[RMDB]
RNA sequence: GGGAACGACUCGAGUAGAGUCGAAAAAAAUAUUGGUGUAUCUUUGAAAAAGGGUAACCAUAGGUUGAAUGGUAAAGAAUUACUUGGUUAUGCAAGAUUCCGUCACGACCCUGAAGGUGACUUCGGAACCUUCCGUCUAGUUCGCUAGACGGAAGGUAAAAGAAACAACAACAACAAC
Reactivity to DMS in 0.01 (KOAc 150mM, MgCl2 10mM, bicine 150mM(pH8.5), 24C), signal-to-noise 2, nucleotides 027 to 126: a050a040a060u020a060u010u000g000g010u000g010u010a000u000c010u000u000u000g000a080a050a110a010a010g000g020g000u010a030a030c000c020a000u000a030g020g010u010u000g010a100a090u000g000g010u020a050a110a060g000a040a030u000u000a080c020u000u000g010g010u000u000a090u020g000c020a000a010g020a100u000u000c020c050g000u010c060a040c040g010a100c060c000c030u010g010a040a080g000g010u000g000a090c080u000u010c020g010g010a170